This 177-nucleotide RNA was probed chemically with 2A3. For 2A3 the reverse transcriptase was SuperScript II with manganese. It was measured as part of the RMDB library OK1LIB. 2A3 is a SHAPE reagent: it acylates the 2'-hydroxyl of flexible nucleotides of all four kinds. The 2A3 profile rests on 1,154 reads. The reactions ran in a buffer of 150 mM KOAc, 10 mM MgCl2 and 150 mM bicine (pH 8.5), at 24 C.
RNA sequence: GGGAACGACUCGAGUAGAGUCGAAAACUCAAUGCAGCAUCCCUGGCCGGGACGCACGGUCUUGUGUCCUUCCUCGUGUUCUUCUGCUUUGCGUGGUAUCUGAAGGGUAGGUGGGUGCCCGGAGCGGUGUGUCACUCGACUUCGGUCGAGUGACACAAAAAGAAACAACAACAACAAC
Reactivity to 2A3 in 0.01 (KOAc 150mM, MgCl2 10mM, bicine 150mM(pH8.5), 24C), signal-to-noise 2, nucleotides 027 to 126: c010u010c010a020a120u130g060c050a020g000c010a040u060c030c010c020u090g130g000c070c020g050g000g020a020c040g030c010a020c100g060g010u000c050u060u120g040u020g050u050c020c000u030u040c000c040u030c030g080u060g010u090u020c010u050u010c030u000g000c000u090u080u190g020c090g020u100g000g080u050a120u080c030u050g130a110a090g010g030g000u060a080g030g100u090g010g070g000u030g000c000c000c000g000g000a010g010c050g030g040